[RMDB]
RNA sequence: GGGAACGACUCGAGUAGAGUCGAAAAAGCGCCUCGUAGACGGUGGCGAAUCCGCGUUCCUUGUCGAACCGCCGCGUGUCCUUGCUCUCGAACAGCACGUCCGUAUAGAGGCCGUUAAGCCACCGCAGCACUAAUACCAGUUCGCUGGUAUUAGUGCAAAAGAAACAACAACAACAAC
Reactivity to DMS in 0.01 (KOAc 150mM, MgCl2 10mM, bicine 150mM(pH8.5), 24C), signal-to-noise 3, nucleotides 027 to 126: a100g020c120g000c030c010u010c050g010u000a080g010a100c040g000g000u000g010g020c010g040a090a100u000c130c090g010c040g020u000u000c010c020u000u010g020u000c060g000a080a060c070c070g020c080c110g010c070g010u000g000u010c050c050u010u000g010c030u010c050u000c170g010a060a070c160a080g010c030a040c100g010u000c060c020g000u010a110u010a130g010a040g010g000c080c060g000u000u000a050a210g030c000c010a040c010c030g000c080a130
Reactivity to 2A3 in 0.01 (KOAc 150mM, MgCl2 10mM, bicine 150mM(pH8.5), 24C), signal-to-noise 2, nucleotides 027 to 126: a000g080c050g020c010c000u030c060g050u010a040g040a160c020g040g030u040g010g000c040g010a040a060u070c060c050g050c040g030u060u040c000c000u040u090g130u130c060g010a030a010c030c030g070c040c020g060c030g040u060g060u120c000c040u070u060g010c000u020c010u030c070g040a110a030c000a060g010c020a000c030g050u020c030c020g030u040a040u050a180g110a060g000g000c000c000g040u030u090a060a040g020c000c010a030c020c020g010c030a030